[RMDB]
RNA sequence: GGGAACGACUCGAGUAGAGUCGAAAAGCACUCCUUUUCGAAGGAGUGCCCAGGCGCGCGGCCUUUGUCCUGUCGCGUGUGCGCCGCGCGCGAUAUACGGGCAUCUGUGCAUAUUCGUAUGCACAAAAAUUCUUCUUAUCUUCGGAUAAGAAGAAUUAAAAGAAACAACAACAACAAC
Reactivity to DMS in 0.01 (KOAc 150mM, MgCl2 10mM, bicine 150mM(pH8.5), 24C), signal-to-noise 6, nucleotides 027 to 126: g000c010a000c000u000c000c000u000u000u000u020c170g020a020a010g010g000a020g010u000g000c000c020c040a100g000g010c010g010c010g020c020g020g010c010c060u000u010u000g010u000c010c030u000g010u000c070g020c070g010u000g010u000g010c110g010c010c010g000c010g020c010g010c010g010a040u000a060u010a070c090g010g010g000c050a080u010c200u000g010u000g000c000a010u000a020u000u010c170g010u000a000u000g010c000a010c010a000a030a060
Reactivity to 2A3 in 0.01 (KOAc 150mM, MgCl2 10mM, bicine 150mM(pH8.5), 24C), signal-to-noise 4, nucleotides 027 to 126: g010c000a000c000u020c010c000u020u030u050u110c190g090a020a000g010g010a000g000u000g010c010c000c000a050g050g010c000g000c000g000c020g040g000c010c000u130u120u180g030u030c010c020u060g060u140c070g040c070g210u080g080u070g060c070g020c000c000g010c000g010c010g000c010g010a000u050a010u020a080c030g010g020g000c020a060u030c110u110g000u000g000c000a000u010a020u040u060c100g060u020a000u010g000c000a000c000a000a090a020

The record gives the reactivity of an RNA of 177 nucleotides to DMS and 2A3. For 2A3, 9,890 sequencing reads were counted.